[RMDB]
RNA sequence: GGGAACGACUCGAGUAGAGUCGAAAAUAAACUGGAGCCUAGCAAGAUUACAAAGUUUGAGAAUGCUUUCUUGUCUCAUGUCGUCAGCCAGCACCAAGCCUUGUUGGGCACUAUCAGGUAUGAAUGCGUGCUAGCAAAAUUUCGAUUUUGCUAGCACAAAAGAAACAACAACAACAAC
Reactivity to DMS in 0.01 (KOAc 150mM, MgCl2 10mM, bicine 150mM(pH8.5), 24C), signal-to-noise 1, nucleotides 027 to 126: u010a010a030a080c060u000g080g000a120g000c050c020u000a030g020c000a030a060g010a180u000u010a200c160a030a140a180g020u020u010u000g010a030g010a050a090u000g020c030u000u010u000c060u000u030g000u000c030u010c080a080u010g000u010c110g010u000c010a040g000c080c010a060g000c030a070c080c140a000a110g010c060c000u010u010g000u010u000g020g010g020c000a100c150u000a050u000c080a030g000g010u010a150u000g010a050a020u020g040c260